Structure probing data (2A3 and DMS) for a 207-nucleotide construct. The DMS profile rests on 1,863 reads. 2A3 adducts were read by reverse transcription with SuperScript II with manganese. For DMS the reverse transcriptase was MarathonRT.

[RMDB]
RNA sequence: GGGAACGACUCGAGUAGAGUCGAAAAAACGCAAGCCCGAGGGGUGACGCCUCGGGGUAGGCGGACCGGUCCACAAGGCCGGCUAAGCGUAUAAGCCCGGGGAGUGCCGUAAUGGCGAGAACCGGGUGAAAGCGCGAAUGGCCUCCCGUAAGGGGGGGACGGUAAUUAUGUUCGCAUAAUUACCGUCAAAAGAAACAACAACAACAAC
Reactivity to 2A3 in 0.01 (KOAc 150mM, MgCl2 10mM, bicine 150mM(pH8.5), 24C), signal-to-noise 3, nucleotides 027 to 156: a000a000c060g000c060a070a030g120c010c000c000g000a020g000g040g010g050u290g100a020c080g080c040c010u010c020g010g000g010g010u020a070g020g140c010g000g000a030c000c000g000g010u030c060c050a070c010a260a090g000g000c000c020g000g000c020u050a080a010g020c000g000u160a050u030a140a000g000c000c000c000g030g030g000g000a110g080u100g010c000c000g030u150a140a090u300g010g030c000g000a080g020a140a010c000c000g000g020g010u000g000a000a000a060g000c010g000c010g040a020a010u070g070g030c000c000u000c020c000c000g110u170a110a150g000g000g000g000g000g020
Reactivity to DMS in 0.01 (KOAc 150mM, MgCl2 10mM, bicine 150mM(pH8.5), 24C), signal-to-noise 1, nucleotides 027 to 156: a120a010c020g000c070a150a280g030c030c020c000g000a040g000g000g010g040u000g010a090c190g040c000c010u000c000g000g010g040g020u000a030g030g040c010g000g000a050c010c010g060g090u040c010c010a140c250a040a200g000g010c000c010g030g040c030u000a090a080g000c040g010u000a120u010a110a300g000c010c010c010g000g010g020g000a300g030u000g010c000c000g030u010a070a070u010g020g000c010g000a120g010a240a200c030c000g010g000g000u000g000a010a050a300g040c000g010c040g000a060a060u010g000g040c020c000u000c010c000c000g000u010a180a180g000g000g010g000g010g010
Conditions: 150 mM KOAc, 10 mM MgCl2 and 150 mM bicine (pH 8.5), 24 C.